This 177-nucleotide RNA was probed chemically with DMS and 2A3. The RNA was probed in 150 mM KOAc, 10 mM MgCl2 and 150 mM bicine (pH 8.5) at 24 C. The DMS profile rests on 4,930 reads. Source: RMDB library OK1LIB, as collected in RNAgym. For DMS the reverse transcriptase was MarathonRT.
RNA sequence: GGGAACGACUCGAGUAGAGUCGAAAAAGUGUAUUGGUAUAGCAUUUCAGCACCAUUGAAAGCAUUUAUCGAACAUUGGUCAGAAACAUUACAAGAUAAACGAUAUCCUAAUUUUAAGGCACAAAUGUACCUCCCCAUUAUUCGUAAUGGGGAGGUAAAAAGAAACAACAACAACAAC
Reactivity to DMS in 0.01 (KOAc 150mM, MgCl2 10mM, bicine 150mM(pH8.5), 24C), signal-to-noise 4, nucleotides 027 to 126: a060g020u000g030u010a060u020u010g010g010u000a040u000a070g000c060a140u000u020u000c040a070g010c180a100c150c120a100u030u000g000a040a070a100g000c030a060u010u020u030a030u000c070g000a040a120c040a020u000u000g000g020u030c090a180g000a130a060a060c040a050u000u000a070c110a110a050g000a050u000a050a080a040c110g010a070u010a030u000c010c010u020a040a030u050u040u000u060a100a070g010g020c110a060c080a000a050a030u020g000
Reactivity to 2A3 in 0.01 (KOAc 150mM, MgCl2 10mM, bicine 150mM(pH8.5), 24C), signal-to-noise 3, nucleotides 027 to 126: a000g070u050g040u040a180u250u100g060g050u040a060u060a050g030c120a210u040u070u030c010a030g030c110a090c060c040a070u020u100g030a060a040a010g000c100a090u060u020u060a060u100c030g000a030a010c000a000u000u060g060g020u040c030a040g110a080a110a000c050a070u040u070a040c040a120a000g080a120u100a080a150a000c040g040a000u010a030u090c000c020u060a080a110u030u140u050u050a090a050g030g000c000a010c010a020a100a070u110g030